[RMDB]
The record gives the reactivity of an RNA of 177 nucleotides to DMS and 2A3. Conditions: 150 mM KOAc, 10 mM MgCl2 and 150 mM bicine (pH 8.5), 24 C.
RNA sequence: GGGAACGACUCGAGUAGAGUCGAAAAGAUAUGGAUUCGUGGUAAUAGCUUGGACCUUACGUCGGAAACGACGUAAGCUAGCUGAUACCCGAAUCCUAAGUCAAAGCGCAACCUUCGGGUUGCGCAACCUAGGAUUGGUGUUCGCACCAAUCCUAGGAAAAGAAACAACAACAACAAC
Reactivity to DMS in 0.01 (KOAc 150mM, MgCl2 10mM, bicine 150mM(pH8.5), 24C), signal-to-noise 2, nucleotides 027 to 126: g030a050u020a300u010g010g020a000u000u000c000g030u020g060g040u010a000a150u020a060g000c020u000u010g000g000a070c300c000u010u000a010c010g020u000c030g020g000a100a060a180c010g000a010c000g000u000a000a000g010c000u000a010g000c000u000g000a190u010a020c010c000c010g010a010a000u010c000c000u000a000a130g020u000c020a080a120a150g010c010g000c000a000a010c000c020u000u030c190g060g020g020u000u000g000c000g010c000a000a010
Reactivity to 2A3 in 0.01 (KOAc 150mM, MgCl2 10mM, bicine 150mM(pH8.5), 24C), signal-to-noise 2, nucleotides 027 to 126: g030a020u080a040u150g010g010a000u010u020c030g140u300g020g000u020a120a090u100a280g020c020u090u300g060g090a190c040c000u000u000a010c000g000u010c000g000g010a070a090a090c000g000a000c010g020u010a010a000g000c000u010a010g000c000u020g080a050u020a030c000c000c000g000a000a000u000c000c000u010a050a000g010u000c050a060a110a080g000c000g000c000a000a010c020c020u050u070c300g120g000g000u000u000g000c000g030c010a000a000